[RMDB]
RNA sequence: GGGAACGACUCGAGUAGAGUCGAAAAGUAUCGGACGACCGGAUUCAUGUCGGCGAUCCCGUCGAGCAUCCCGAUUGCGGACCUGACGGGCCUGAACGACUGGAUCAUGUGGUUCGCCGUCGGCAUGCAUCGGGGGAUCGUUCGCGAUCCCCCGAUGAAAAGAAACAACAACAACAAC
Reactivity to DMS in 0.01 (KOAc 150mM, MgCl2 10mM, bicine 150mM(pH8.5), 24C), signal-to-noise 2, nucleotides 027 to 126: g020u030a040u020c000g030g030a080c070g010a050c040c070g010g000a040u000u010c050a070u000g020u000c020g020g000c020g000a100u000c000c000c000g010u020c000g000a060g010c160a230u010c130c010c000g000a210u010u000g020c060g020g010a010c240c000u020g000a040c030g000g000g000c250c120u010g010a030a070c040g000a030c020u000g000g010a110u000c040a060u000g030u010g000g020u010u010c020g010c080c030g000u000c030g000g000c140a080u000g000
Reactivity to 2A3 in 0.01 (KOAc 150mM, MgCl2 10mM, bicine 150mM(pH8.5), 24C), signal-to-noise 1, nucleotides 027 to 126: g010u010a030u120c040g020g090a010c040g010a070c060c020g040g040a010u060u060c050a050u270g050u050c010g040g000c000g030a020u020c000c010c020g020u060c020g040a010g000c010a100u040c060c010c010g060a070u040u220g050c100g000g020a000c010c000u010g000a010c000g010g040g000c020c020u080g030a090a010c010g070a020c080u080g010g060a140u020c000a030u150g030u120g090g020u060u030c000g020c000c000g060u060c000g000g020c050a060u030g000

Conditions: 150 mM KOAc, 10 mM MgCl2 and 150 mM bicine (pH 8.5), 24 C. The record gives the reactivity of an RNA of 177 nucleotides to DMS and 2A3. Reactivities are rounded to 0.1 and cut off at 0 and 3. DMS (dimethyl sulfate) methylates the pairing face of unpaired adenines and cytosines. The DMS profile rests on 1,957 reads.